[RMDB]
RNA sequence: GGGAACGACUCGAGUAGAGUCGAAAAGACACGACGGAGACGUCGUGUCAAAGAGUGGGAAACCACUCAAAGAGCCACAGCUUCGGCUGUGGCUCAAGGCGCGGCGCUGUCCGCGGAACAAACUGAACUCACCUAAAUUAUUCGUAAUUUAGGUGAGAAAAGAAACAACAACAACAAC
Reactivity to DMS in 0.01 (KOAc 150mM, MgCl2 10mM, bicine 150mM(pH8.5), 24C), signal-to-noise 4, nucleotides 027 to 126: g010a030c000a010c010g010a020c000g000g010a270g000a220c010g030u000c000g010u000g010u000c000a010a060a110g010a020g020u000g000g000g010a160a110a220c000c010a010c000u000c000a040a060a090g000a020g010c000c010a010c000a000g010c000u000u010c260g030g020c000u000g040u000g000g000c000u000c000a010a050g000g010c010g040c000g000g000c010g010c160u010g010u010c000c000g010c000g000g010a070a110c160a030a040a050c060u000g000a120a270